Background:
An RNA of 177 nucleotides, treated with DMS and read out base by base.

RNA sequence: GGGAACGACUCGAGUAGAGUCGAAAAUAUUCAAGAUGCUCUCACUACAAACUGUUGAACAAGAAGCGAGCAAUAAGAUUAUAUUUUGGAGACAAAACAGGAGUAAGGGGUUCUAAGGCUAUGUCACGCACAUAAGCUUCUUCGGAAGCUUAUGUGCAAAAGAAACAACAACAACAAC
Reactivity to DMS in 0.01 (KOAc 150mM, MgCl2 10mM, bicine 150mM(pH8.5), 24C), signal-to-noise 1, nucleotides 027 to 126: u000a050u000u000c020a040a100g030a200u010g020c060u010c010u010c110a210c080u000a080c160a050a060a190c130u000g000u000u000g030a070a080c220a050a050g000a110a030g020c230g020a040g000c070a080a000u000a080a190g000a080u000u000a060u000a090u000u000u000u000g010g010a100g010a070c090a040a030a030a130c120a040g000g000a070g000u000a030a040g060g050g070g030u000u000c000u000a020a000g020g010c090u000a080u000g000u020c040a060c060
Annotation
DMS adducts were read by reverse transcription with MarathonRT. It was measured as part of the RMDB library OK2TRN. Reactivities are given for positions 27 through 126. For DMS, 494 sequencing reads were counted. The RNA was probed in 150 mM KOAc, 10 mM MgCl2 and 150 mM bicine (pH 8.5) at 24 C.